[RMDB]
RNA sequence: GGGAACGACUCGAGUAGAGUCGAAAAAUCAAACUAGAUUAUGUUGAUCAAACUACAUGUGGCUGUGCUACCUCUGAAAUUGAACUCAAUAGUUGACUCAAAGUCUGGAUAGUCAGUACAGAUUGUCCAAUGUCCACUUCUUCGGAAGUGGACAUUGAAAAGAAACAACAACAACAAC
Reactivity to DMS in 0.01 (KOAc 150mM, MgCl2 10mM, bicine 150mM(pH8.5), 24C), signal-to-noise 3, nucleotides 027 to 126: a050u010c020a060a020a110c080u010a150g000a090u000u010a060u010g020u010u000g000a060u000c100a080a030a130c090u000a090c090a060u000g000u020g000g030c010u010g010u020g030c020u000a040c010c010u000c040u000g010a030a050a070u000u010g000a080a060c180u000c050a050a080u000a080g020u000u000g000a030c040u000c060a050a060a080g010u000c020u000g000g000a010u000a020g010u000c030a070g000u000a060c150a040g000a080u000u000g010u000c050
Reactivity to 2A3 in 0.01 (KOAc 150mM, MgCl2 10mM, bicine 150mM(pH8.5), 24C), signal-to-noise 1, nucleotides 027 to 126: a040u010c010a020a000a060c070u100a040g040a300u130u120a110u280g040u020u020g040a060u080c040a030a040a080c070u150a040c000a060u150g070u030g120g000c040u070g000u100g150c010u000a000c010c020u010c040u040g040a050a010a040u040u040g000a030a000c000u020c050a000a060u020a190g150u010u070g060a020c010u000c060a040a030a030g020u000c010u000g000g000a000u020a040g020u030c040a000g010u010a040c010a000g000a000u040u010g000u040c030
Conditions: 150 mM KOAc, 10 mM MgCl2 and 150 mM bicine (pH 8.5), 24 C. This 177-nucleotide RNA was probed chemically with DMS and 2A3. Reactivities are given for positions 27 through 126. The DMS profile rests on 2,025 reads. For 2A3, 852 sequencing reads were counted. 2A3 adducts were read by reverse transcription with SuperScript II with manganese.